[RMDB]
RNA sequence: GGGAACGACUCGAGUAGAGUCGAAAAGAUAUGGACCUGACGAGACAUGCGUGAGGAUCGGAAACGAUCCUCCACGCAACAGCUCGUAGGUCCUAAGUCAAAACAGUUCUGCCUUCGGGCAGAACUGCGAUGUCAUCGAGUUCGCUCGAUGACAUCGAAAAGAAACAACAACAACAAC
Reactivity to DMS in 0.01 (KOAc 150mM, MgCl2 10mM, bicine 150mM(pH8.5), 24C), signal-to-noise 3, nucleotides 027 to 126: g010a030u000a020u010g000g010a000c000c020u000g000a030c010g000a040g000a000c060a300u020g020c000g020u000g000a010g000g010a010u010c000g020g000a020a000a020c010g000a010u000c000c000u010c140c120a000c000g030c020a120a030c220a180g000c010u000c000g000u000a000g000g010u000c000c000u000a000a050g000u000c010a080a110a090a300c020a000g000u000u000c000u000g000c000c000u000u010c280g020g020g030c010a000g000a000a000c000u000g010
Reactivity to 2A3 in 0.01 (KOAc 150mM, MgCl2 10mM, bicine 150mM(pH8.5), 24C), signal-to-noise 3, nucleotides 027 to 126: g010a000u000a010u040g010g010a000c010c020u100g300a030c020g000a000g010a000c220a300u300g000c000g000u010g010a000g010g020a010u010c000g000g000a020a010a000c010g000a000u010c000c000u030c020c010a000c000g000c000a080a030c090a030g000c010u010c010g000u000a000g000g000u000c000c000u000a000a000g000u000c030a000a000a100a200c010a020g000u000u000c000u000g000c000c000u060u120c300g080g000g000c000a010g000a000a000c010u000g000